[RMDB]
RNA sequence: GGGAACGACUCGAGUAGAGUCGAAAAUGCAGGGCGGUUAUGUCGUACCGGCCAGGACCGGGCAUGAGGAAGGACUGAUCGCCAUUCGCGCCGCCGAGGCCGAUGACGUGACGCGCGAACAGGCGCGCGACGGAUAUCCUUUCGAGGAUAUCCGUCGAAAAGAAACAACAACAACAAC
Reactivity to DMS in 0.01 (KOAc 150mM, MgCl2 10mM, bicine 150mM(pH8.5), 24C), signal-to-noise 5, nucleotides 027 to 126: u040g000c070a140g000g000g000c010g000g020u000u000a010u060g020u000c010g020u010a110c040c010g010g000c000c060a150g010g010a120c110c080g000g000g010c050a050u020g010a150g020g040a100a100g000g010a040c020u000g000a020u000c020g000c000c000a040u020u010c070g010c100g000c020c010g020c090c040g000a130g010g010c010c030g000a090u000g020a100c150g000u000g010a120c040g010c020g010c010g030a060a120c250a160g010g000c000g010c020g010
Reactivity to 2A3 in 0.01 (KOAc 150mM, MgCl2 10mM, bicine 150mM(pH8.5), 24C), signal-to-noise 7, nucleotides 027 to 126: u220g010c040a050g050g030g020c020g010g040u050u050a150u290g030u040c030g020u060a130c020c010g010g020c010c090a170g060g060a100c000c030g010g010g010c090a150u200g090a120g150g050a140a060g110g010a000c000u020g020a040u030c010g000c010c010a000u020u030c010g000c020g010c010c000g000c030c060g040a080g050g000c000c020g030a050u090g040a030c110g060u080g020a030c010g010c010g000c010g040a140a090c070a140g170g000c000g000c000g000

An RNA of 177 nucleotides, treated with DMS and 2A3 and read out base by base. The reactions ran in a buffer of 150 mM KOAc, 10 mM MgCl2 and 150 mM bicine (pH 8.5), at 24 C. It was measured as part of the RMDB library OK1LIB.